[RMDB]
RNA sequence: GGGAACGACUCGAGUAGAGUCGAAAACUGUACGUUUGUUUGUUGGGCUCAUGGCUUUGAAUUAACGUCUGCAUCAUACUUUUGCAAGAUAGGUAAGGAACAGAAGUGUUGCAUGUGCAAUAGACGCGAACGCCCUGGUUCGCCAGGGCGAAAAGAAACAACAACAACAAC
Reactivity to DMS in 0.01 (KOAc 150mM, MgCl2 10mM, bicine 150mM(pH8.5), 24C), signal-to-noise 2, nucleotides 027 to 129: c040u000g050u090a090c180g000u030u000u000g030u020u040u000g030u000u030g040g060g040c000u030c110a070u000g000g040c010u030u020u060g010a040a090u080u000a060a050c070g010u020c060u030g020c040a030u020c030a080u010a040c100u010u070u020u000g000c130a080a050g060a080u030a070g030g000u040a100a130g040g060a000a300c070a070g000a000a000g050u060g020u040u000g020c240a060u050g010u050g020c000a100a040u050a020g000a030c140g050c070g000a020a110